[RMDB]
RNA sequence: GGGAACGACUCGAGUAGAGUCGAAAAGAUAUGGAAUACGAGCGAUAAGAAUUGAUUCGGAAACGAAUUGAUUCUUUUGACGCUCGUUCCUAAGUCAAACAUAGCCCCCGUUCGCGGGGGCUAUGAACAUAGUGAAAGGGUUCGCCCUUUCACUAUGAAAAGAAACAACAACAACAAC
Reactivity to DMS in 0.01 (KOAc 150mM, MgCl2 10mM, bicine 150mM(pH8.5), 24C), signal-to-noise 6, nucleotides 027 to 126: g000a040u000a300u010g000g010a030a070u010a050c050g010a010g020c000g030a150u010a020a010g000a020a010u000u000g010a010u000u000c000g010g000a100a090a190c010g000a010a000u000u000g000a010u000u000c000u000u000u010u010g010a170c090g010c000u000c000g000u000u000c000c000u000a050a150g000u000c040a110a110a290c010a000u000a000g000c000c000c000c000c010g030u000u000c200g030c010g000g010g030g010g010c000u000a000u000g000a080a180
Reactivity to 2A3 in 0.01 (KOAc 150mM, MgCl2 10mM, bicine 150mM(pH8.5), 24C), signal-to-noise 2, nucleotides 027 to 126: g000a010u100a030u160g030g040a040a050u160a160c020g000a000g010c020g010a050u020a130a060g000a030a010u000u010g000a000u040u000c030g000g030a060a070a020c010g000a010a000u000u000g020a020u020u020c000u040u030u010u030g100a020c020g000c010u010c000g000u000u020c010c010u020a130a010g070u040c050a070a030a150c000a050u010a000g000c010c000c000c000c020g010u030u030c260g000c040g110g000g060g000g000c000u000a000u000g010a000a000